[RMDB]
RNA sequence: GGGAACGACUCGAGUAGAGUCGAAAAGCGGACUACAUCGCCCGCCUGGUCGGGCAGGACCUGUGUGUGGCGAUGCUGCCCGCCGCGCACGCGCCGCACCUGACCGGGGUGCGCACCGUCGAGGUGAGGCCGUCAUAGUGUUCGCACUAUGACGGCCAAAAGAAACAACAACAACAAC
Reactivity to DMS in 0.01 (KOAc 150mM, MgCl2 10mM, bicine 150mM(pH8.5), 24C), signal-to-noise 1, nucleotides 027 to 126: g000c010g010g010a010c020u020a200c030a000u010c030g010c010c000c000g030c000c000u010g000g020u000c010g010g010g000c080a070g020g010a020c020c000u000g020u030g020u000g000u000g010g010c000g020a040u000g000c000u020g000c050c000c000g000c010c110g010c070g020c050a030c040g010c090g030c280c020g040c020a070c040c010u030g090a160c170c030g000g000g000g000u000g020c030g090c030a080c020c010g020u000c110g000a130g010g040u000g000a140
Reactivity to 2A3 in 0.01 (KOAc 150mM, MgCl2 10mM, bicine 150mM(pH8.5), 24C), signal-to-noise 2, nucleotides 027 to 126: g010c010g000g000a000c020u040a000c090a030u020c000g000c020c000c000g020c000c000u010g000g010u040c050g020g180g190c080a060g050g060a020c000c010u040g050u070g000u040g130u280g180g000c010g000a010u000g000c000u000g000c000c020c010g030c010c010g000c000g000c000a060c040g060c000g030c080c000g000c020a020c000c030u130g100a250c080c080g000g000g010g020u030g000c020g000c000a040c010c010g080u070c090g060a030g050g050u030g040a030